[RMDB]
The data come from the RNA Mapping Database (RMDB), library OK1LIB.
This 177-nucleotide RNA was probed chemically with 2A3 and DMS.
For DMS the reverse transcriptase was MarathonRT.
The RNA was probed in 150 mM KOAc, 10 mM MgCl2 and 150 mM bicine (pH 8.5) at 24 C.
For DMS, 12,101 sequencing reads were counted.
RNA sequence: GGGAACGACUCGAGUAGAGUCGAAAAGACCGUCAGUUAGACGGAAGAAGUGCAUAAAUCCACAACGGAAGACGAUAUAAUGCACAAAUGUGGAUAAGCGUACGGAUCUACGUGCGCUAAACGUGAGAUUAAUGACUGGGUUCGCCCAGUCAUUAAUAAAAGAAACAACAACAACAAC
Reactivity to 2A3 in 0.01 (KOAc 150mM, MgCl2 10mM, bicine 150mM(pH8.5), 24C), signal-to-noise 4, nucleotides 027 to 126: g080a010c010c020g020u030c000a060g040u130u300a050g000a020c010g110g000a020a010g100a040a010g000u010g010c030a020u080a100a130a010u020c000c010a080c020a170a080c180g080g060a060a050g100a080c030g000a000u010a020u040a170a110u120g030c020a000c020a010a060a050u210g000u050g000g080a060u050a140a000g000c000g000u000a000c000g000g020a000u030c030u120a120c060g000u020g000c000g000c000u000a040a010a000c070g070u090g070a120g000
Reactivity to DMS in 0.01 (KOAc 150mM, MgCl2 10mM, bicine 150mM(pH8.5), 24C), signal-to-noise 6, nucleotides 027 to 126: g020a090c010c000g010u000c000a190g020u060u060a100g010a000c010g000g000a100a060g010a090a090g010u010g000c010a020u010a100a090a060u010c020c020a050c160a130a200c190g000g020a100a100g000a130c130g000a110u040a080u020a120a050u020g000c020a020c020a070a050a080u020g010u000g000g000a090u000a100a030g010c000g020u010a000c020g000g010a140u120c230u050a100c010g010u010g000c010g000c010u010a000a030a030c120g000u010g010a110g010